RNA sequence: GGGAACGACUCGAGUAGAGUCGAAAAUUCCAAUAGAAUGGCAACUAGUCAGACAUCUGUUUAGACACCAAAAUCAUUAUUUGUUUUCAUUCAUCUCAUUGGCCGUGUAGUUCAUGUCUAUGCCUCACCUUUUAUUCAGGUUCGCCUGAAUAAAAGGAAAAGAAACAACAACAACAAC
Reactivity to DMS in 0.01 (KOAc 150mM, MgCl2 10mM, bicine 150mM(pH8.5), 24C), signal-to-noise 4, nucleotides 027 to 126: u000u020c010c000a170a130u010a070g010a100a060u000g010g010c050a060a070c070u010a090g010u000c050a060g000a110c130a060u010c070u000g010u000u010u000a050g020a100c100a110c100c070a030a040a070a050u010c110a040u020u000a090u000u010u000g010u010u000u010u000c050a080u000u010c030a070u020c050u000c060a060u000u000g010g000c040c090g020u010g020u000a070g000u010u000c060a040u020g000u010c010u010a090u000g010c050c030u000c140a150
Reactivity to 2A3 in 0.01 (KOAc 150mM, MgCl2 10mM, bicine 150mM(pH8.5), 24C), signal-to-noise 3, nucleotides 027 to 126: u030u000c020c000a000a020u130a070g090a050a040u070g010g010c010a040a030c060u040a020g040u050c010a000g060a090c020a070u110c070u060g060u080u070u080a060g020a030c020a010c000c000a030a030a040a090u100c070a040u020u200a060u110u180u060g100u020u050u020u040c050a050u090u010c020a060u040c020u020c040a060u000u070g040g020c030c040g040u000g010u040a040g030u020u040c030a030u060g040u020c020u040a030u060g010c000c000u030c030a080